[RMDB]
RNA sequence: GGGAACGACUCGAGUAGAGUCGAAAAUGACGUUAAACUGCUGACUCAUACAUACUGACACCGGUUGCUCAACAGGCUGUGUGGGACAAUAGAAUAACAAGGCUGUCAAUGUGAGCUUGACGGCUGCAAAACCUGCAGUACUUCGGUACUGCAGGAACAUGCACUCUCCGUUCGCGGAGAGUGCAUGAAAAGAAACAACAACAACAAC
Reactivity to 2A3 in 0.01 (KOAc 150mM, MgCl2 10mM, bicine 150mM(pH8.5), 24C), signal-to-noise 1, nucleotides 027 to 156: u100g020a020c090g020u030u060a000a010a050c020u080g000c000u010g010a060c000u020c000a000u000a060c020a000u080a010c010u070g020a120c050a080c130c040g060g000u070u030g030c040u070c110a150a090c010a070g030g010c000u000g000u000g000u000g030g000g000a030c020a000a060u080a040g030a060a020u040a020a020c040a110a060g070g000c000u000g000u030c000a000a010u070g000u040g040a010g020c030u010u000g000a000c000g000g000c030u010g010c000a000a000a040a180c000c010u000g000c000a000g000u010a000c000u040u050c150g060g000u000a000c000u020g000c000a000g000g000a000a000

Record summary: Source: RMDB library M2RFPK, as collected in RNAgym. The record gives the reactivity of an RNA of 207 nucleotides to 2A3. The 2A3 profile rests on 800 reads. Values cover nucleotides 27 to 156. The reactions ran in a buffer of 150 mM KOAc, 10 mM MgCl2 and 150 mM bicine (pH 8.5), at 24 C.